[RMDB]
Source: RMDB library RFM100, as collected in RNAgym. This 177-nucleotide RNA was probed chemically with DMS and 2A3. As a SHAPE reagent, 2A3 marks flexible, mostly unpaired nucleotides at the ribose 2'-OH. The reactions ran in a buffer of 150 mM KOAc, 10 mM MgCl2 and 150 mM bicine (pH 8.5), at 24 C.
RNA sequence: GGGAACGACUCGAGUAGAGUCGAAAAGCAACUGCACAGAAAACUUACCCCUAAAUAUUCAAUGAGGAUUUGAUUCGACUCUUACCUUGGCGACAAGGUAAGAUAGAUGAAGAGAAUAUUUAGGGGUUCUGUUUCAAAAGUUCGCUUUUGAAACAGAAAAAGAAACAACAACAACAAC
Reactivity to DMS in 0.01 (KOAc 150mM, MgCl2 10mM, bicine 150mM(pH8.5), 24C), signal-to-noise 2, nucleotides 027 to 126: g010c010a070a020c050u010g000c190a110c130a100g010a070a050a230a050c090u000u050a120c000c000c000c000u000a000a000a000u000a000u010u000c010a140a130u000g000a130g030g000a220u010u010u000g000a110u000u000c020g030a170c220u020c010u000u000a010c000c000u020u000g000g000c300g000a300c030a000a000g020g010u000a000a000g020a000u000a050g000a000u000g000a240a030g020a120g000a000a000u000a000u000u000u010a000g000g000g000g000u000
Reactivity to 2A3 in 0.01 (KOAc 150mM, MgCl2 10mM, bicine 150mM(pH8.5), 24C), signal-to-noise 3, nucleotides 027 to 126: g030c020a020a130c060u190g030c070a070c050a090g160a030a130a060a040c070u100u060a030c000c010c000c000u000a000a000a000u000a000u010u010c060a070a130u230g070a160g200g060a130u100u100u100g020a020u000u040c000g000a030c120u000c000u000u000a000c000c000u000u000g000g000c010g030a070c020a000a010g000g000u000a000a000g000a000u000a000g000a000u010g010a040a020g080a000g000a010a000u000a000u010u000u000a000g000g010g000g000u000